[RMDB]
RNA sequence: GGGAACGACUCGAGUAGAGUCGAAAAGGGACUGUGGCAGCAAGAUAAAGUGGCCGAUCUGGAUCCGUCUUUCCACGAUCUGACCGAAGCAGACUUCCAGGAGACCUUCAACGUCGGUUCAUUUGCCGACCUAAAUAAAGUUCGCUUUAUUUAGGUCAAAAGAAACAACAACAACAAC
Reactivity to DMS in 0.01 (KOAc 150mM, MgCl2 10mM, bicine 150mM(pH8.5), 24C), signal-to-noise 9, nucleotides 027 to 126: g010g010g010a080c060u000g020u000g010g010c060a070g010c070a080a080g010a120u010a060a090a100g020u000g010g010c070c050g010a040u000c050u000g010g000a050u000c130c160g000u010c060u000u000u000c030c030a080c170g000a060u000c020u010g010a080c050c040g010a080a090g010c060a050g010a080c070u000u000c050c050a090g000g010a100g000a070c050c040u000u000c080a040a070c220g000u000c030g010g010u000u000c060a110u000u000u000g010c130c090
Reactivity to 2A3 in 0.01 (KOAc 150mM, MgCl2 10mM, bicine 150mM(pH8.5), 24C), signal-to-noise 9, nucleotides 027 to 126: g050g010g010a030c040u050g020u060g080g000c020a020g010c030a070a040g030a140u170a160a140a020g070u080g050g000c010c010g010a040u010c030u050g030g020a030u040c040c030g050u000c060u040u080u020c020c020a030c070g020a040u000c020u040g060a090c020c030g020a040a000g020c020a000g030a090c020u070u000c030c010a010g040g020a040g030a040c030c000u050u040c060a060a030c040g040u030c020g030g010u110u120c050a100u070u080u180g040c030c040